[RMDB]
RNA sequence: GGGAACGACUCGAGUAGAGUCGAAAAGAUAUGGACUACCCACCCUGAAGGAGAGGGUGUCGGAAACGACACCUACCCACCUCCUGAACAGGAGGUCCUAAGUCAAACAGUGCCUUCGGGCACUGAACAUAUGCUAUGCGUUCGCGCAUAGCAUAUGAAAAGAAACAACAACAACAAC
Reactivity to DMS in 0.01 (KOAc 150mM, MgCl2 10mM, bicine 150mM(pH8.5), 24C), signal-to-noise 8, nucleotides 027 to 126: g010a050u010a130u020g010g010a030c010u000a100c020c010c010a300c090c010c000u030g030a180a030g010g000a020g010a140g010g000g020u000g010u000c000g020g000a090a060a150c010g010a000c000a000c000c000u000a040c030c040c100a300c070c000u000c000c000u000g010a090a110c050a010g000g010a110g010g000u000c010c000u000a070a100g020u000c050a090a120a210c010a010g000u000g000c000c000u000u010c130g030g000g000c000a000c000u000g000a070a170
Reactivity to 2A3 in 0.01 (KOAc 150mM, MgCl2 10mM, bicine 150mM(pH8.5), 24C), signal-to-noise 5, nucleotides 027 to 126: g030a010u110a080u160g010g000a010c020u150a230c020c030c000a020c010c010c000u030g040a050a010g010g010a010g010a010g020g000g000u010g000u010c010g030g020a060a070a010c020g000a000c000a000c000c010u030a050c030c030c000a050c010c000u000c000c000u040g010a220a040c020a030g020g000a020g000g020u000c000c000u090a230a070g090u070c080a070a080a070c010a060g000u000g020c010c010u080u180c290g030g000g000c000a000c000u000g000a000a000
Structure probing data (DMS and 2A3) for a 177-nucleotide construct.
Conditions: 150 mM KOAc, 10 mM MgCl2 and 150 mM bicine (pH 8.5), 24 C.
The 2A3 profile rests on 14,961 reads.
For DMS the reverse transcriptase was MarathonRT.
For 2A3 the reverse transcriptase was SuperScript II with manganese.